[RMDB]
RNA sequence: GGGAACGACUCGAGUAGAGUCGAAAAUUCAAGGCCACAUUGCGCCAAGGCGCCAAGUUGCAGAGUUUUGCUUCAAGAGCAGCUUGCUUGCGCGCCACAGCCAGCCACACAUUCAAGAGAGCACAAGCAAGGCCACAAGUUAGAGAGCAAGGCUUGCCAAUUACCGCUGAUUCGUCAGCGGUAAUUGAAAAGAAACAACAACAACAAC
Reactivity to 2A3 in 0.01 (KOAc 150mM, MgCl2 10mM, bicine 150mM(pH8.5), 24C), signal-to-noise 2, nucleotides 027 to 156: u080u080c040a060a080g070g000c000c000a050c030a170u100u130g020c040g000c050c090a050a150g000g000c000g000c000c000a040a010g050u150u140g120c170a040g020a020g110u120u270u260u120g030c000u030u110c150a150a110g040a010g220c000a010g020c000u050u180g000c000u030u050g040c080g010c000g010c060c000a000c030a000g000c010c010a000g020c000c010a010c000a010c010a030u210u230c140a170a070g050a000g020a000g070c000a050c000a080a030g000c040a030a010g080g010c050c000a050c050a040a010g010u030u080a060g030a000g000a000g090c040a080a000g020g030c020u010u040g030c010
Reactivity to DMS in 0.01 (KOAc 150mM, MgCl2 10mM, bicine 150mM(pH8.5), 24C), signal-to-noise 1, nucleotides 027 to 156: u010u020c110a100a050g010g080c050c010a030c040a040u040u010g030c090g080c010c060a080a100g000g030c000g010c010c030a000a230g060u000u000g060c050a130g000a150g000u000u030u000u030g040c000u000u010c080a090a230g000a090g070c010a070g000c030u000u000g000c060u000u000g010c060g000c010g040c000c010a050c080a070g040c020c010a120g000c040c050a150c050a070c020a140u040u020c120a050a100g060a100g010a080g000c040a070c010a040a070g000c060a080a150g030g010c040c040a120c010a040a100g010u000u000a070g040a080g000a090g030c000a040a150g000g040c010u000u000g000c000
This 207-nucleotide RNA was probed chemically with 2A3 and DMS. Source: RMDB library OK3TST, as collected in RNAgym. DMS adducts were read by reverse transcription with MarathonRT. High 2A3 reactivity points to a flexible backbone, as in loops and unpaired stretches. The RNA was probed in 150 mM KOAc, 10 mM MgCl2 and 150 mM bicine (pH 8.5) at 24 C. Values are in units of 0.01, from 0 to 300, in steps of 10. For DMS, 1,445 sequencing reads were counted.